[RMDB]
Notes:
An RNA of 177 nucleotides, treated with 2A3 and read out base by base. The 2A3 profile rests on 302 reads. Reactivities are rounded to 0.1 and cut off at 0 and 3. The reactions ran in a buffer of 150 mM KOAc, 10 mM MgCl2 and 150 mM bicine (pH 8.5), at 24 C. It was measured as part of the RMDB library OK1LIB.

RNA sequence: GGGAACGACUCGAGUAGAGUCGAAAAUGCUCAGAUAGUAGCUGAUUGUGCCUGUAGCGCCCUCGGAUAUGCUAUGGGUGACAUAGGCAGGGUUGCCGGAUAUGACCUGCUGCUGGAGGCCUAUAUGAAUCGUAGGGACCUUCGGGUCCCUACGAUUAAAAGAAACAACAACAACAAC
Reactivity to 2A3 in 0.01 (KOAc 150mM, MgCl2 10mM, bicine 150mM(pH8.5), 24C), signal-to-noise 1, nucleotides 027 to 126: u070g000c000u000c000a000g120a300u290a070g150u030a000g000c000u060g010a180u000u220g000u050g000c000c000u000g000u020a090g000c000g120c230c020c040u120c050g090g000a120u070a050u300g030c070u000a070u000g020g000g000u000g050a000c000a000u000a000g000g030c000a000g000g120g000u150u000g010c010c000g000g070a070u050a140u020g220a120c000c050u120g010c000u000g000c000u020g000g050a000g100g000c050c020u150a140u140a240u300g170